RNA sequence: GGGAACGACUCGAGUAGAGUCGAAAAAUUCGCACCUCUAUCAAACCGGGUAACCCCACCUUUGGCAAGGCCUACUGUCAGAUUAAAUCUGAACUACUACAAAUGAACAGAUACUUAGUCCAGCUCGUCAGCUGAGCUCAUUCGUGAGCUCAGCUGAAAAAGAAACAACAACAACAAC
Reactivity to 2A3 in 0.01 (KOAc 150mM, MgCl2 10mM, bicine 150mM(pH8.5), 24C), signal-to-noise 1, nucleotides 027 to 126: a000u100u000c040g000c020a020c010c000u000c030u020a030u110c010a050a020a060c020c000g000g080g030u060a050a060c000c010c020c010a000c000c000u030u080u120g000g000c010a020a030g070g020c000c000u060a050c010u050g000u000c000a000g000a000u040u130a060a060a080u000c010u010g020a010a010c020u060a110c010u040a020c110a140a100a070u160g020a030a020c000a000g030a030u070a000c050u080u070a100g010u040c000c000a000g020c000u060c050g050
This 177-nucleotide RNA was probed chemically with 2A3. It was measured as part of the RMDB library RFM100. For 2A3 the reverse transcriptase was SuperScript II with manganese.